[RMDB]
RNA sequence: GGGAACGACUCGAGUAGAGUCGAAAAGAUAUGGAAUCAUCGGUAGGGAGCCUAAUUUCGGAAACGAAAUAGGGCGAAGAACUACCGUUGAUUCCUAAGUCAAAGCGAUUUCGUUCGCGAAAUCGCAGAAUCAUCCCUAGUUCGCUAGGGAUGAUUCAAAAGAAACAACAACAACAAC
Reactivity to DMS in 0.01 (KOAc 150mM, MgCl2 10mM, bicine 150mM(pH8.5), 24C), signal-to-noise 4, nucleotides 027 to 126: g000a030u000a300u000g010g000a020a020u000c010a010u000c000g020g020u010a020g010g000g000a110g020c000c000u000a150a070u000u000u010c000g010g000a100a060a230c000g010a000a010a010u000a300g030g000g010c020g010a060a100g000a180a180c010u000a010c000c000g000u000u000g000a010u000u000c000c000u000a010a070g010u000c020a110a140a110g010c000g000a010u000u000u000c010g010u000u010c260g020c010g010a010a000a000u000c000g020c000a020
Reactivity to 2A3 in 0.01 (KOAc 150mM, MgCl2 10mM, bicine 150mM(pH8.5), 24C), signal-to-noise 4, nucleotides 027 to 126: g030a010u070a020u120g000g010a000a000u000c000a010u000c020g000g040u010a020g040g250g070a060g010c010c000u100a130a100u000u000u000c010g020g030a060a050a060c010g010a010a010a020u140a140g030g020g010c020g030a110a020g060a070a110c000u000a010c000c000g000u000u000g000a000u000u000c000c000u010a030a010g000u000c050a100a110a060g010c000g000a000u000u000u000c030g040u060u130c300g000c010g150a000a000a010u000c000g000c020a010